[RMDB]
Annotation:
Structure probing data (2A3 and DMS) for a 177-nucleotide construct. Reactivities are given for positions 27 through 126. DMS adducts were read by reverse transcription with MarathonRT. 2A3 adducts were read by reverse transcription with SuperScript II with manganese.

RNA sequence: GGGAACGACUCGAGUAGAGUCGAAAACGCUGACGGGUUCGCAGCGCACCGGACCAACACGACCGGCGGGUAUCGCGCCGUGUUCGCGUCGGGAUCGACCGGCGAGGUAUUCGACUACCGCGCGCCGCCACAGAGCGUAUUUCGAUACGCUCUGUGGAAAAGAAACAACAACAACAAC
Reactivity to 2A3 in 0.01 (KOAc 150mM, MgCl2 10mM, bicine 150mM(pH8.5), 24C), signal-to-noise 3, nucleotides 027 to 126: c030g000c010u020g090a050c030g110g030g120u180u250c050g040c040a000g010c000g030c000a030c010c000g000g030a040c020c010a050a030c050a020c050g050a030c000c000g000g010c030g030g030g040u270a120u300c080g030c000g000c110c010g050u060g030u090u030c030g000c040g040u010c020g000g050g070a190u080c030g080a090c030c000g000g000c010g000a020g000g000u020a030u080u210c100g060a070c080u060a020c010c010g000c010g030c000g000c020c010g030
Reactivity to DMS in 0.01 (KOAc 150mM, MgCl2 10mM, bicine 150mM(pH8.5), 24C), signal-to-noise 3, nucleotides 027 to 126: c040g010c020u010g000a140c070g010g000g000u020u000c030g040c040a030g000c020g020c050a250c050c000g030g000a140c050c030a050a050c060a030c020g000a050c020c020g000g010c000g020g000g010u000a080u000c130g020c010g000c000c000g030u010g010u010u000c030g020c060g040u010c050g010g000g010a090u000c100g020a080c070c010g000g020c050g000a040g010g010u000a010u000u020c200g010a110c180u000a050c040c010g000c040g010c010g010c040c060g000